An RNA of 207 nucleotides, treated with 2A3 and read out base by base. Values are in units of 0.01, from 0 to 300, in steps of 10. For 2A3, 310 sequencing reads were counted. The data come from the RNA Mapping Database (RMDB), library ARCHII.
RNA sequence: GGGAACGACUCGAGUAGAGUCGAAAAAGCAUGCCGUAGAAGGCCACUACGUAAAAAACCAAAACAAAACAAUUCCCGAACGCGAAAUCGCUCUCGCUGCUUAAUUAACGCAGCGACGUCCUACCCGGUUUGCCUGUAGGCUGGGAUAGGGCGUAAGGGCUUACUGAAUCUUCGGAUUCAGUAAGCCAAAAGAAACAACAACAACAAC
Reactivity to 2A3 in 0.01 (KOAc 150mM, MgCl2 10mM, bicine 150mM(pH8.5), 24C), signal-to-noise 1, nucleotides 027 to 156: a000g100c000a010u190g030c000c030g000u030a060g000a300a300g000g000c010c000a080c000u060a020c030g090u150a040a020a000a000a000a080c120c050a140a180a080a080c140a000a100a080a000c010a080a120u010u010c050c000c020g100a050a020c000g060c000g030a010a000a190u290c000g080c010u130c000u010c030g000c000u000g000c000u100u210a200a300u250u160a060a120c100g030c000a000g000c000g010a000c000g000u010c030c000u000a000c000c000c000g000g130u020u040u170g040c050c070u080g000u140a000g000g120c000u000g000g000g070a160u000a000g000g000g000c020g000u000a000a000g050